[RMDB]
RNA sequence: GGGAACGACUCGAGUAGAGUCGAAAAGUAGUGCUCGAGAGGGAGGCUGUCUCGCAGAGCUUUUAGAUCUUCUGAUCUUUCGCUCCUCCAUAUCGCUUAUGCGUCAAGCGAUAGACGCAUAAUUAAAUUACAGAAUAGCAUUCGUGCUAUUCUGUAAAAAAGAAACAACAACAACAAC
Reactivity to 2A3 in 0.01 (KOAc 150mM, MgCl2 10mM, bicine 150mM(pH8.5), 24C), signal-to-noise 2, nucleotides 027 to 126: g060u100a010g050u000g120c030u030c070g050a030g020a030g050g040g020a010g080g030c030u050g090u010c020u010c040g040c030a030g010a000g110c000u050u080u040u030a010g000a020u040c000u270u030c100u300g000a020u000c000u020u030u000c040g000c030u020c010c010u000c000c010a040u070a040u090c030g010c030u050u010a010u020g000c010g000u000c000a060a080g070c040g090a020u050a070g000a010c010g000c000a000u010a020a010u020u100a020a050a020
Reactivity to DMS in 0.01 (KOAc 150mM, MgCl2 10mM, bicine 150mM(pH8.5), 24C), signal-to-noise 5, nucleotides 027 to 126: g020u010a070g020u010g010c030u000c020g010a100g010a160g010g000g000a070g000g000c060u010g010u000c020u000c050g030c140a120g010a130g010c030u000u010u010u010a040g010a010u000c010u000u010c210u000g000a030u000c010u000u000u000c100g000c010u000c020c020u000c020c020a060u000a060u000c030g010c200u000u000a000u000g000c000g000u000c010a040a130g020c190g000a090u010a070g000a020c000g000c000a010u000a000a020u000u000a030a040a100